The data come from the RNA Mapping Database (RMDB), library M2RFPK. The record gives the reactivity of an RNA of 207 nucleotides to DMS and 2A3. Conditions: 150 mM KOAc, 10 mM MgCl2 and 150 mM bicine (pH 8.5), 24 C. 2A3 adducts were read by reverse transcription with SuperScript II with manganese.
[RMDB]
RNA sequence: GGGAACGACUCGAGUAGAGUCGAAAAUACCGUCUUCUCCCCGACGGUUUCAUUCCAUAGCUUCACGUUGUGUAGCGUAGGUGGAAGGUAUCGUGUGGUGUAUAAACACCACAUAGUCUCUUAGGGGUCAAGCUGAUAAACUUCGGUUUAUCAGCAACUCUUAGAAGUGUUUCGACACUUCUAAGAGAAAAGAAACAACAACAACAAC
Reactivity to DMS in 0.01 (KOAc 150mM, MgCl2 10mM, bicine 150mM(pH8.5), 24C), signal-to-noise 3, nucleotides 027 to 156: u000a050c010c010g020u000c020u010u000c040u000c010c000c000c050g000a040c020g020g010u010u000u020c060a150u000u000c010c010a100u000a160g000c010u010u000c030a050c030g040u000u000g030u000g010u000a010g000c000g020u000a070g130g010u000g010g010a050a080g020g020u010a070u000c070g040u010g010u010g010g030u010g010u000a140u000a120a160a150c000a000c000c000a010c000a000u000a050g000u000c040u010c010u000u000a250g050g010g010g030u000c050a090a200g010c010u000g010a020u010a000a000a020c000u010u010c260g010g030u000u000u000a000u000c000a010g010c000a010a010
Reactivity to 2A3 in 0.01 (KOAc 150mM, MgCl2 10mM, bicine 150mM(pH8.5), 24C), signal-to-noise 8, nucleotides 027 to 156: u050a000c000c000g010u000c020u230u050c040u120c000c000c000c000g000a000c000g000g020u010u040u060c020a050u010u010c010c000a020u030a080g000c000u040u070c010a030c060g300u300u270g020u090g020u060a010g000c030g050u090a100g110g090u030g000g030a020a020g070g030u160a060u170c050g000u010g000u000g030g000u000g040u020a100u100a290a260a020c000a000c000c000a000c000a000u000a000g000u000c010u000c010u100u250a030g000g000g000g020u030c070a080a050g000c000u000g000a000u000a000a000a000c000u030u080c190g060g000u000u000u000a000u000c000a000g000c000a000a000